[RMDB]
An RNA of 177 nucleotides, treated with DMS and read out base by base. Source: RMDB library OK2TRN, as collected in RNAgym. The RNA was probed in 150 mM KOAc, 10 mM MgCl2 and 150 mM bicine (pH 8.5) at 24 C.
RNA sequence: GGGAACGACUCGAGUAGAGUCGAAAAAUAAUGCAGCGUGACUGCAGGGACCAGCGGCGCGAUAGCCGUGAGAUCGUUUUUCGCCAGCAGUUGACGUACCCGGGAAGCGGAUAUCGGCAUCUCCUGGUAGCUCUGUCAGGUUCGCCUGACAGAGCUAAAAAGAAACAACAACAACAAC
Reactivity to DMS in 0.01 (KOAc 150mM, MgCl2 10mM, bicine 150mM(pH8.5), 24C), signal-to-noise 1, nucleotides 027 to 126: a070u020a080a050u000g000c010a050g010c030g030u000g020a100c000u000g000c000a050g010g010g030a100c040c010a230g030c020g000g000c000g080c150g020a140u030a140g010c010c010g050u000g010a050g000a120u000c030g000u000u010u000u010u000c050g010c020c000a030g010c200a020g000u000u000g000a030c040g020u000a020c060c000c050g000g000g030a100a120g040c010g030g010a020u000a020u000c040g020g000c030a050u000c040u000c170c000u000g000g000